[RMDB]
RNA sequence: GGGAACGACUCGAGUAGAGUCGAAAAGUCCUGGGUCUCCAAGGGAAUCUCUCAUCACCCCACUCAAGGCUGUUCCCUCUGCUGUGGCUCAGGAUAGAGACUCUUGGCCAACACAGAUGCCUCCUGCGAAUACAGCUAUGUUCGCAUAGCUGUAUUCAAAAGAAACAACAACAACAAC
Reactivity to 2A3 in 0.01 (KOAc 150mM, MgCl2 10mM, bicine 150mM(pH8.5), 24C), signal-to-noise 5, nucleotides 027 to 126: g010u020c010c000u000g020g020g000u040c060u020c080c040a050a040g050g000g030a070a120u100c050u010c010u030c100a120u110c050a180c000c020c000c000a030c030u090c050a040a060g070g000c040u040g030u020u030c000c020c000u000c070u030g030c040u060g020u020g040g010c030u030c110a010g000g000a010u030a030g090a010g020a030c020u010c010u050u040g020g020c020c010a070a030c060a010c010a020g060a050u090g040c000c020u040c010c000u030g010c020
Reactivity to DMS in 0.01 (KOAc 150mM, MgCl2 10mM, bicine 150mM(pH8.5), 24C), signal-to-noise 9, nucleotides 027 to 126: g010u000c000c010u000g000g010g020u010c060u000c060c050a100a060g010g000g000a070a050u010c100u000c040u000c070a100u020c130a290c050c040c000c040a070c080u000c100a090a060g010g000c090u000g000u000u000c010c000c010u000c180u010g010c180u000g020u000g000g010c000u010c030a030g010g010a030u000a050g010a240g000a070c110u010c010u000u000g000g010c030c020a060a070c060a060c060a060g000a080u000g010c060c020u000c030c020u000g000c210
The record gives the reactivity of an RNA of 177 nucleotides to 2A3 and DMS. Conditions: 150 mM KOAc, 10 mM MgCl2 and 150 mM bicine (pH 8.5), 24 C. The data come from the RNA Mapping Database (RMDB), library OK2TST. DMS adducts were read by reverse transcription with MarathonRT.